Record summary:
Structure probing data (2A3 and DMS) for a 177-nucleotide construct. For DMS the reverse transcriptase was MarathonRT. The DMS profile rests on 3,504 reads.
RNA sequence: GGGAACGACUCGAGUAGAGUCGAAAACGCUGCCCACUGGUGGAGGGAGCCUGCGCCACCGCGAGGGGGGUGCACCGGGGGCGGUGGCCGGCAUGACGGGAGCGGCUGUGAGGCUGCCUGCGGAGUGACCGAGCAUUUAUUUCGAUAAAUGCUCGGUAAAAGAAACAACAACAACAAC
Reactivity to 2A3 in 0.01 (KOAc 150mM, MgCl2 10mM, bicine 150mM(pH8.5), 24C), signal-to-noise 3, nucleotides 027 to 126: c080g040c040u120g040c010c030c000a100c110u100g030g040u110g010g040a110g030g040g010a020g030c020c030u100g040c090g030c010c010a050c020c000g000c000g080a170g020g020g000g000g010g040u210g070c040a080c010c050g000g010g020g050g000c010g000g010u000g030g000c010c010g030g000c000a060u110g020a010c040g010g030g020a050g060c010g010g010c040u040g020u060g060a070g020g020c020u020g030c000c000u040g060c040g050g030a070g030u080g050
Reactivity to DMS in 0.01 (KOAc 150mM, MgCl2 10mM, bicine 150mM(pH8.5), 24C), signal-to-noise 2, nucleotides 027 to 126: c110g010c080u000g000c010c020c010a100c120u020g000g020u010g000g010a070g010g020g010a130g020c020c020u010g000c130g020c010c000a010c030c030g000c050g000a260g010g020g000g000g010g010u020g030c020a080c010c080g020g000g000g000g010c010g010g050u000g000g000c020c020g010g000c020a060u070g000a120c130g020g000g020a160g000c020g010g000c020u010g000u030g000a130g010g020c020u020g000c030c000u000g000c100g000g010a160g000u000g000